[RMDB]
This 177-nucleotide RNA was probed chemically with DMS and 2A3. For 2A3 the reverse transcriptase was SuperScript II with manganese. It was measured as part of the RMDB library OK1LIB. For 2A3, 593 sequencing reads were counted. DMS adducts were read by reverse transcription with MarathonRT. The reactions ran in a buffer of 150 mM KOAc, 10 mM MgCl2 and 150 mM bicine (pH 8.5), at 24 C. The DMS profile rests on 1,178 reads.
RNA sequence: GGGAACGACUCGAGUAGAGUCGAAAAUCACAUUCUUUCACCAGAACGAGACUAGCUUCUUGGCUGUCAGAAAACCGAGGGGGGCCUGUUCCUAGCGAAAAAGUUAUUAUCACGGCCCUGUCUAAGCUAGCCAAUUAACCUUCGGGUUAAUUGGCUAAAAAGAAACAACAACAACAAC
Reactivity to DMS in 0.01 (KOAc 150mM, MgCl2 10mM, bicine 150mM(pH8.5), 24C), signal-to-noise 1, nucleotides 027 to 126: u000c100a120c160a070u020u000c040u000u000u000c110a040c060c010a080g000a090a070c070g020a190g000a060c250u000a080g020c030u000u000c070u000u020g000g030c190u060g000u000c130a030g000a030a080a190a020c060c020g030a040g000g010g000g000g000g000c000c000u020g020u070u000c040c040u030a150g000c040g020a000a120a050a120a020g010u020u010a070u030u000a020u020c100a100c150g000g010c000c000c000u010g000u000c030u020a060a060g070c180
Reactivity to 2A3 in 0.01 (KOAc 150mM, MgCl2 10mM, bicine 150mM(pH8.5), 24C), signal-to-noise 2, nucleotides 027 to 126: u030c000a000c000a130u040u180c000u010u110u050c010a000c020c080a030g000a000a000c030g060a030g250a280c010u090a030g120c000u100u100c000u110u120g140g000c160u020g010u000c000a050g030a000a020a000a050c100c080g010a120g160g040g000g000g020g040c000c000u000g000u020u000c010c010u100a020g030c080g160a110a160a000a000a110g050u020u000a040u090u000a010u020c090a090c130g010g000c000c000c010u000g030u020c000u070a120a000g040c030